[RMDB]
Structure probing data (2A3 and DMS) for a 170-nucleotide construct. Source: RMDB library 15KLIB, as collected in RNAgym. Values cover nucleotides 27 to 129. As a SHAPE reagent, 2A3 marks flexible, mostly unpaired nucleotides at the ribose 2'-OH. In probing experiments dimethyl sulfate is read out at A N1 and C N3, which are open when not base-paired.
RNA sequence: GGGAACGACUCGAGUAGAGUCGAAAAUCAACCUUGCAAAAGUUUGCACUUAUGCCAUCUUUGCUUACUCACCACAGCUUACACUUGUGUUUCCGGAAGUGAAGAUGAUACUUUUAUUAUACACAUGACGCUGGACCCUUCGGGGUCCAGAAAAGAAACAACAACAACAAC
Reactivity to 2A3 in 0.01 (KOAc 150mM, MgCl2 10mM, bicine 150mM(pH8.5), 24C), signal-to-noise 3, nucleotides 027 to 129: u090c040a020a020c010c010u050u080g010c040a120a070a000a000g020u070u080u090g060c020a080c000u120u070a070u180g000c000c000a000u030c000u010u000u000g000c000u060u000a070c050u060c110a000c010c010a010c020a010g020c000u280u220a020c070a020c120u070u050g010u000g020u050u110u100c130c030g010g010a040a000g010u010g030a020a000g010a020u000g000a010u080a020c000u100u080u030u020a060u230u030a080u060a060c160a000c040a160u090g050a010c060g000
Reactivity to DMS in 0.01 (KOAc 150mM, MgCl2 10mM, bicine 150mM(pH8.5), 24C), signal-to-noise 4, nucleotides 027 to 129: u030c100a050a080c110c020u070u000g050c110a030a000a050a110g000u000u010u000g000c060a140c220u060u070a020u070g020c020c110a000u030c060u160u060u000g020c000u000u050a200c050u040c120a180c300c020a070c090a100g010c000u060u070a130c250a120c140u010u060g020u000g050u000u030u010c110c160g040g000a090a040g090u030g000a000a070g000a000u000g050a080u080a050c020u000u050u020u000a070u020u030a130u060a060c200a000c150a020u030g010a170c100g070